[RMDB]
RNA sequence: GGGAACGACUCGAGUAGAGUCGAAAAGAUAUGGAAUAGCUCCCCACCCUGCCUCGUCCUAUGAAGAAUUACGUCGGAAACGACGUAAUUUGGAGGACACGCGAGGCAGGAGGCUAUUCCUAAGUCAUCAUACUCCCUAGUUCGCUAGGGAGUAUGAAAAAGAAACAACAACAACAAC
Reactivity to DMS in 0.01 (KOAc 150mM, MgCl2 10mM, bicine 150mM(pH8.5), 24C), signal-to-noise 4, nucleotides 027 to 126: g020a110u030a220u010g000g020a030a000u000a020g000c000u010c170c000c000c050a300c090c010c010u010g040c000c010u000c030g030u000c010c010u000a250u010g000a140a220g000a000a000u000u000a000c000g000u000c000g020g010a110a070a160c000g010a020c000g020u000a000a000u000u010u000g000g030a010g030g010a150c070a060c210g030c270g000a010g000g020c000a010g000g010a020g000g000c000u000a020u010u000c010c000u010a040a070g000u010c140a180
Reactivity to 2A3 in 0.01 (KOAc 150mM, MgCl2 10mM, bicine 150mM(pH8.5), 24C), signal-to-noise 2, nucleotides 027 to 126: g080a080u300a150u300g000g000a000a000u000a010g040c030u180c020c040c000c010a040c010c000c000u020g010c000c010u000c000g110u180c040c010u300a300u300g000a000a040g010a010a010u000u000a000c000g000u000c000g000g050a060a130a040c010g000a000c030g000u020a020a000u000u000u000g000g000a000g020g000a030c030a020c160g230c100g000a010g010g000c000a020g030g000a000g010g010c000u000a000u030u000c000c010u000a030a040g090u060c020a050